[RMDB]
RNA sequence: GGGAACGACUCGAGUAGAGUCGAAAACUUGUAUGUCAGAAAAAGAUCAGUGAGGGAGAUGAGUGUGUACAAUGCAGUUCUAAAGUCACAGGUGGACCUAUAAGCCACCAUCAUCGCUUUGGGAGACGAAACUGUCAGAUUUCGAUCUGACAGUUUCAAAAGAAACAACAACAACAAC
Reactivity to 2A3 in 0.01 (KOAc 150mM, MgCl2 10mM, bicine 150mM(pH8.5), 24C), signal-to-noise 2, nucleotides 027 to 126: c010u050u090g040u070a140u100g070u080c020a000g140a080a090a060a040a010g040a080u020c030a010g040u010g090a040g000g050g000a070g010a040u090g020a020g060u030g010u020g000u030a000c030a040a010u050g010c020a000g010u040u050c020u120a070a050a010g020u110c030a020c040a090g010g030u030g020g030a070c020c030u200a150u060a300a000g010c000c000a020c060c000a020u050c010a010u020c050g030c020u020u020u030g050g020g030a080g000a030c060
Reactivity to DMS in 0.01 (KOAc 150mM, MgCl2 10mM, bicine 150mM(pH8.5), 24C), signal-to-noise 3, nucleotides 027 to 126: c060u000u010g010u000a050u000g010u010c040a110g020a060a070a090a090a130g000a050u010c050a080g010u010g020a070g030g020g010a080g000a080u010g000a060g010u000g020u000g000u000a050c080a070a080u010g030c070a060g010u000u010c060u010a050a030a030g030u000c140a070c150a110g020g020u000g000g020a050c090c050u000a130u010a100a110g000c010c010a020c010c010a060u020c100a050u010c160g010c020u000u000u000g000g000g000a120g030a090c180